RNA sequence: GGGAACGACUCGAGUAGAGUCGAAAAGGAGCGCACUCUCCUUAAACGGCGUACGUUUUAAAUUAGACGACAACGAUAAUUUUGCAAUGGCAGCCUAAGGGCAGCCCGUCUUGCCUGAGAGUACCACGGCUUGGGUAAAGGCGUCGACUAGUGGUGAGCGCUAAAGAAAGUUCGCUUUCUUUAGCGCAAAAGAAACAACAACAACAAC
Reactivity to 2A3 in 0.01 (KOAc 150mM, MgCl2 10mM, bicine 150mM(pH8.5), 24C), signal-to-noise 3, nucleotides 027 to 156: g010g000a010g000c050g010c040a040c030u080c000u000c010c000u010u030a030a060a000c020g030g010c060g000u090a040c020g010u040u040u030u130a140a280a160u060u100a040g030a050c000g020a030c070a090a000c100g060a040u070a160a150u120u130u140u220g090c070a070a070u060g010g000c020a020g000c030c010u060a090a130g050g000g000c010a000g000c000c010c000g000u000c010u020u010g010c010c000u010g010a000g010a000g020u030a020c000c000a010c030g010g000c000u020u020g020g000g000u080a150a090a020g020g010c010g020u020c010g080a070c060u170a070g020u000g030g010u000g010a030

An RNA of 207 nucleotides, treated with 2A3 and read out base by base. The RNA was probed in 150 mM KOAc, 10 mM MgCl2 and 150 mM bicine (pH 8.5) at 24 C. Reactivities are given for positions 27 through 156.